An RNA of 177 nucleotides, treated with DMS and 2A3 and read out base by base.

RNA sequence: GGGAACGACUCGAGUAGAGUCGAAAACUCAACGCGGUGUCUUACUAUCGUGGGAAAGACAUUAGCUGCAUUCCCAGCUCCGGCGACUGUGUCGUCGUUGCCACGGAUGCACUGAUGACUGGCUACAAGUCUUUCACGGUUUCGACCGUGAAAGACUAAAAGAAACAACAACAACAAC
Reactivity to DMS in 0.01 (KOAc 150mM, MgCl2 10mM, bicine 150mM(pH8.5), 24C), signal-to-noise 1, nucleotides 027 to 126: c020u000c000a120a260c030g030c050g000g000u000g000u000c070u000u000a110c120u010a030u000c040g040u020g010g010g000a060a050a010g000a130c020a010u000u000a000g000c290u000g020c010a030u000u000c010c300c080a240g000c000u000c000c020g000g000c000g000a010c000u000g000u040g020u010c010g010u000c000g040u000u000g000c000c050a240c300g000g000a030u000g000c000a090c000u000g020a010u000g000a170c030u000g010g000c030u010a120c170a150
Reactivity to 2A3 in 0.01 (KOAc 150mM, MgCl2 10mM, bicine 150mM(pH8.5), 24C), signal-to-noise 1, nucleotides 027 to 126: c020u010c000a010a050c020g000c020g050g000u010g010u030c090u110u160a100c030u100a060u040c030g000u000g090g050g050a000a110a080g040a020c010a040u010u040a010g080c190u010g000c000a010u070u110c000c000c000a000g010c010u040c010c000g000g000c000g000a000c030u300g120u070g020u300c000g000u020c020g000u000u010g000c020c010a090c120g000g000a000u000g000c000a000c000u000g000a000u000g000a010c010u010g040g000c030u040a020c030a180
For DMS, 989 sequencing reads were counted. Conditions: 150 mM KOAc, 10 mM MgCl2 and 150 mM bicine (pH 8.5), 24 C. For DMS the reverse transcriptase was MarathonRT.